This 207-nucleotide RNA was probed chemically with 2A3.
[RMDB]
RNA sequence: GGGAACGACUCGAGUAGAGUCGAAAAUGUACCGUUAGCAAUCGCGGUUUCAGUAUCCUGCACAGUCGGCUCUUGGCCGGUUGCCGGCUGGGCAACAGCUUCAGGGUCAUCCUCUAAACCUACAAAUUUGCGCGCCCAUCCUGGUACUAGGCUGGCAGCGUAGUUAACGUUUCGACGUUAACUACGCAAAAGAAACAACAACAACAAC
Reactivity to 2A3 in 0.01 (KOAc 150mM, MgCl2 10mM, bicine 150mM(pH8.5), 24C), signal-to-noise 2, nucleotides 027 to 156: u100g000u040a020c010c010g020u010u100a080g030c140a130a110u120c050g010c030g050g000u020u070u050c020a010g000u090a050u060c010c010u020g000c030a010c010a060g030u010c020g010g000c010u010c020u180u190g050g000c000c000g070g000u060u030g000c000c000g040g000c010u030g030g000g000c030a060a040c020a060g050c000u150u130c040a020g020g020g010u060c020a050u060c000c000u100c040u120a140a100a110c010c030u120a100c080a030a170a140u090u110u120g030c040g000c020g020c000c010c000a040u030c020c020u000g050g000u090a080c060u030a050g000g080c020u050g020g060c020a030
Values cover nucleotides 27 to 156. Conditions: 150 mM KOAc, 10 mM MgCl2 and 150 mM bicine (pH 8.5), 24 C.